[RMDB]
RNA sequence: GGGAACGACUCGAGUAGAGUCGAAAACUGACCUUGAGCCACUCUGAAUCUGCUGGGUUCAAGCGAGCAUUUAAUUCCACCGAAUCCGCAACAAAUGCAGAAUCAGCACCUACAAUUUGCAGAACAAACUGCAAAAUACGUUCGCGUAUUUUGCAGUAAAAGAAACAACAACAACAAC
Reactivity to DMS in 0.01 (KOAc 150mM, MgCl2 10mM, bicine 150mM(pH8.5), 24C), signal-to-noise 2, nucleotides 027 to 126: c010u010g020a070c300c040u000u010g000a130g010c000c020a070c140u010c080u020g010a090a040u000c060u000g000c060u030g000g000g000u000u000c040a050a020g010c100g030a120g040c090a040u000u030u000a070a180u010u020c000c020a090c140c060g040a050a060u000c000c010g040c080a140a050c220a110a050a110u010g000c000a040g000a090a080u000c050a050g020c030a050c100c030u000a080c100a090a060u000u000u000g000c000a030g010a050a040c170a100a110
Reactivity to 2A3 in 0.01 (KOAc 150mM, MgCl2 10mM, bicine 150mM(pH8.5), 24C), signal-to-noise 1, nucleotides 027 to 126: c010u030g000a020c010c010u000u030g060a000g050c010c010a140c020u120c050u080g060a050a140u040c030u040g020c010u100g080g000g000u020u000c030a000a020g080c070g050a030g000c010a010u070u160u160a200a120u100u040c010c020a030c050c010g020a040a040u070c070c020g020c050a130a000c010a090a160a010u100g030c000a030g010a040a030u080c030a020g060c030a040c030c010u050a040c030a110a220u110u050u150g000c000a000g010a040a030c040a110a080

An RNA of 177 nucleotides, treated with DMS and 2A3 and read out base by base. The reactions ran in a buffer of 150 mM KOAc, 10 mM MgCl2 and 150 mM bicine (pH 8.5), at 24 C. DMS adducts were read by reverse transcription with MarathonRT. The data come from the RNA Mapping Database (RMDB), library OK2TST. For DMS, 915 sequencing reads were counted.